[RMDB]
Chemical mapping of a 177-nucleotide RNA with DMS and 2A3.
Values cover nucleotides 27 to 126.
The RNA was probed in 150 mM KOAc, 10 mM MgCl2 and 150 mM bicine (pH 8.5) at 24 C.
The DMS profile rests on 4,747 reads.
The data come from the RNA Mapping Database (RMDB), library OK2TST.
DMS adducts were read by reverse transcription with MarathonRT.
RNA sequence: GGGAACGACUCGAGUAGAGUCGAAAAAGUCCAACUGACGCAGGCUCAGGGGCAGUUGGCCAAAGAUCAGGCCACGCUGGAUAACGCCCGUCGUGAUCUGGCCCGUUAUCAGAAAUUGUCCAAAACAUCCCGGUAAUAAUUUCGAUUAUUACCGGGAAAAAGAAACAACAACAACAAC
Reactivity to DMS in 0.01 (KOAc 150mM, MgCl2 10mM, bicine 150mM(pH8.5), 24C), signal-to-noise 5, nucleotides 027 to 126: a110g010u020c010c000a090a170c050u000g010a060c100g030c090a070g010g000c070u010c070a060g010g000g010g000c020a030g010u000u000g010g000c020c100a080a110a090g010a080u010c100a090g000g000c020c020a030c080g000c030u000g010g000a070u010a080a070c150g010c080c070c150g000u000c060g030u010g010a050u000c030u010g000g000c030c050c040g010u000u010a040u010c080a060g000a060a060a080u010u000g010u000c010c030a060a060a090a110c260a130
Reactivity to 2A3 in 0.01 (KOAc 150mM, MgCl2 10mM, bicine 150mM(pH8.5), 24C), signal-to-noise 2, nucleotides 027 to 126: a000g040u000c010c000a020a020c030u040g000a010c020g030c170a040g060g070c020u000c090a010g020g000g010g000c000a020g020u080u020g030g000c000c010a090a080a010g170a150u110c050a000g000g030c000c010a010c010g000c010u050g000g030a040u030a070a000c010g050c000c040c000g040u060c010g020u040g020a080u030c010u030g010g030c030c010c020g050u060u020a040u040c020a020g050a050a100a050u140u060g020u050c020c000a020a080a020a020c020a030